[RMDB]
RNA sequence: GGGAACGACUCGAGUAGAGUCGAAAAGUAGGUCGAAAACUGGUUGCUGAAGCAGCAUAAGCUCCCUGAUGUAAGCUCCCUGAAUAAAUUCACAGCAAUACAUCAAAGUAGUAUGAAAGUUGGCCAGCGUUAGGCUGCGAUUCGUCGCAGCCUAACGAAAAGAAACAACAACAACAAC
Reactivity to DMS in 0.01 (KOAc 150mM, MgCl2 10mM, bicine 150mM(pH8.5), 24C), signal-to-noise 1, nucleotides 027 to 126: g000u000a010g020g020u050c050g040a140a060a020a110c090u000g000g000u020u020g000c000u030g050a120a110g010c090a090g000c000a000u000a080a070g020c000u000c030c030c010u000g000a040u040g020u000a030a260g040c050u000c040c090c040u000g030a040a150u000a090a090a110u050u000c000a000c100a020g000c000a060a110u020a000c000a000u000c000a030a050a040g000u040a110g060u010a010u070g000a010a050a100g000u000u010g000g000c190c030a090g000
Reactivity to 2A3 in 0.01 (KOAc 150mM, MgCl2 10mM, bicine 150mM(pH8.5), 24C), signal-to-noise 1, nucleotides 027 to 126: g160u080a010g040g040u000c000g020a000a170a170a000c000u030g050g000u060u000g000c000u050g070a170a090g020c040a000g000c000a150u000a120a050g060c000u020c000c000c000u000g010a000u000g020u000a020a000g040c000u000c000c000c050u000g000a050a050u160a140a070a300u090u000c000a000c020a020g010c020a070a090u090a050c000a000u060c020a030a030a030g170u150a150g000u000a030u120g110a140a000a030g060u080u040g000g020c020c000a000g000
This 177-nucleotide RNA was probed chemically with DMS and 2A3. For 2A3 the reverse transcriptase was SuperScript II with manganese. The RNA was probed in 150 mM KOAc, 10 mM MgCl2 and 150 mM bicine (pH 8.5) at 24 C. For DMS the reverse transcriptase was MarathonRT.